[RMDB]
Description: Chemical mapping of a 207-nucleotide RNA with 2A3. The reactions ran in a buffer of 150 mM KOAc, 10 mM MgCl2 and 150 mM bicine (pH 8.5), at 24 C. Reactivities are given for positions 27 through 156.
RNA sequence: GGGAACGACUCGAGUAGAGUCGAAAAGCAACUUAGGAUUUUAGGCUCCCCGUGCGUGUCUCGAACCAUGCCGGGCCAAACCCACGGGGGCUGGCGGUCCCCGUGCGGUCAAAAUCGAACCGCUGGAAAAACAGUUCUAGCUUCGGCUAGAACUGAAGAUACUCCCACUCUUCGGAGUGGGAGUAUCAAAAGAAACAACAACAACAAC
Reactivity to 2A3 in 0.01 (KOAc 150mM, MgCl2 10mM, bicine 150mM(pH8.5), 24C), signal-to-noise 1, nucleotides 027 to 156: g050c010a030a090c090u110u110a140g080g070a210u160u120u030u140a070g060g000c070u090c040c000c010c010g070u110g100c010g000u040g020u020c060u080c190g130a120a030c100c000a000u010g000c000c000g000g040g000c060c000a080a060a000c000c000c000a000c020g000g000g060g000g000c000u020g000g000c000g020g000u020c010c000c000c000g000u000g000c080g030g000u060c000a120a040a040a060u130c010g000a040a090c010c030g020c020u000g000g060a050a050a000a000a000c000a000g000u000u020c000u000a000g010c000u060u040c300g080g000c000u000a000g000a000a000c000u000g000a000a000